[RMDB]
RNA sequence: GGGAACGACUCGAGUAGAGUCGAAAAGGGGACCGAAUCGAGGAUAGGAGUCGUGGGAAAAGAAACUGACGAAAAAGCCUUAUUGGAUGCAGCACUCAGGAGGUCAGGUUAUGAGAAGUGCAAAGCCCAGUGAUAGGGAUUUCGAUCCCUAUCACUGAAAAGAAACAACAACAACAAC
Reactivity to DMS in 0.01 (KOAc 150mM, MgCl2 10mM, bicine 150mM(pH8.5), 24C), signal-to-noise 3, nucleotides 027 to 126: g000g020g010g020a090c070c040g010a070a100u000c070g000a080g000g030a120u000a090g000g000a080g010u000c040g040u000g040g010g010a040a040a090a160g010a070a070a080c050u010g000a070c070g010a040a060a070a110a130g000c020c010u000u000a120u020u000g000g010a090u000g010c090a060g000c070a050c030u000c050a090g000g010a070g020g000u000c050a050g010g010u010u000a080u010g010a120g020a080a060g000u010g000c060a070a090a150g020c060c090
Reactivity to 2A3 in 0.01 (KOAc 150mM, MgCl2 10mM, bicine 150mM(pH8.5), 24C), signal-to-noise 2, nucleotides 027 to 126: g020g020g000g030a020c050c020g080a060a060u080c030g010a050g020g000a050u080a080g000g030a050g080u060c030g030u130g010g020g000a040a070a070a050g020a030a100a000c040u040g040a040c070g050a080a060a060a070a020g040c020c050u030u110a150u070u160g070g020a030u040g050c050a030g000c000a010c020u040c010a010g010g030a020g070g000u000c050a030g050g020u070u050a070u150g100a060g040a130a040g000u030g040c050a050a050a050g000c020c040
The data come from the RNA Mapping Database (RMDB), library OK2TST. Structure probing data (DMS and 2A3) for a 177-nucleotide construct. Values cover nucleotides 27 to 126. For DMS the reverse transcriptase was MarathonRT. The RNA was probed in 150 mM KOAc, 10 mM MgCl2 and 150 mM bicine (pH 8.5) at 24 C. Values are in units of 0.01, from 0 to 300, in steps of 10.